[RMDB]
RNA sequence: GGGAACGACUCGAGUAGAGUCGAAAACACCCACUGAGUGCCCCCUCAACCAACUCGGAGGCUGCUGUCCGGGGAGACGUGGGCCGGGCAGGGAGCAGGUGGGGUAUGUCUUGAGGGAAGCGAGACGUAAUCAUGUCAGGUUCGCCUGACAUGAUUAAAAAGAAACAACAACAACAAC
Reactivity to 2A3 in 0.01 (KOAc 150mM, MgCl2 10mM, bicine 150mM(pH8.5), 24C), signal-to-noise 2, nucleotides 027 to 126: c050a060c010c070c010a030c070u150g130a140g170u150g040c000c000c000c000c010u000c020a020a030c030c010a030a080c000u020c030g110g000a070g130g040c040u060g030c000u000g030u020c020c030g000g000g010g030a100g000a010c050g000u070g000g060g040c000c000g020g010g000c010a010g010g030g060a030g000c020a030g040g180u230g030g030g030g010u090a220u100g060u020c030u030u030g010a060g030g000g020a010a020g030c020g010a080g000a030c060g030
Reactivity to DMS in 0.01 (KOAc 150mM, MgCl2 10mM, bicine 150mM(pH8.5), 24C), signal-to-noise 2, nucleotides 027 to 126: c180a200c020c000c000a080c140u010g000a150g020u000g020c030c040c010c020c020u010c050a060a070c130c050a060a100c020u000c020g020g030a170g000g000c010u020g040c010u000g030u010c000c020g010g010g020g040a130g020a070c110g000u000g000g020g000c030c020g020g010g000c040a050g010g000g010a040g020c040a070g000g020u000g000g010g010g020u000a060u000g010u010c050u000u010g010a070g010g000g000a110a130g010c050g000a070g000a090c100g010